[RMDB]
RNA sequence: GGGAACGACUCGAGUAGAGUCGAAAAGAUAUGGAUACUCAUGUCUAGUGAUGACCACUACUCGGAAACGAGUAGUGCAAGCUAGGCAUGAGGUAUCCUAAGUCAAAAUCUCCACUUCGGUGGAGAACACUUGCGUACUCUUCGGAGUACGCAAGUGAAAAGAAACAACAACAACAAC
Reactivity to 2A3 in 0.01 (KOAc 150mM, MgCl2 10mM, bicine 150mM(pH8.5), 24C), signal-to-noise 1, nucleotides 027 to 126: g050a030u080a050u180g010g010a000u000a010c010u010c000a010u020g000u000c000u000a020g000u030g240a300u170g050a090c070c000a010c000u000a000c010u020c000g000g040a000a150a060c020g000a000g000u000a000g020u000g000c000a000a150g000c010u000a000g000g000c030a010u010g000a000g000g010u010a010u000c000c000u000a180a000g070u040c010a020a020a030a300u000c000u000c000c000a000c000u100u090c300g180g000u010g000g000a010g000a000a030
Reactivity to DMS in 0.01 (KOAc 150mM, MgCl2 10mM, bicine 150mM(pH8.5), 24C), signal-to-noise 2, nucleotides 027 to 126: g000a030u010a300u010g000g000a010u000a000c000u000c000a030u000g010u000c000u000a020g000u000g010a070u010g020a170c300c020a010c000u010a000c000u000c010g000g000a200a140a130c000g010a010g020u000a000g030u000g020c030a020a140g010c030u000a010g000g000c010a000u010g010a010g010g050u000a000u010c010c000u000a020a110g000u000c040a100a090a180a090u000c000u000c030c000a020c000u000u000c210g040g000u000g020g000a020g030a010a120

Source information
Chemical mapping of a 177-nucleotide RNA with 2A3 and DMS. The RNA was probed in 150 mM KOAc, 10 mM MgCl2 and 150 mM bicine (pH 8.5) at 24 C. For 2A3, 2,827 sequencing reads were counted. DMS adducts were read by reverse transcription with MarathonRT. 2A3 adducts were read by reverse transcription with SuperScript II with manganese.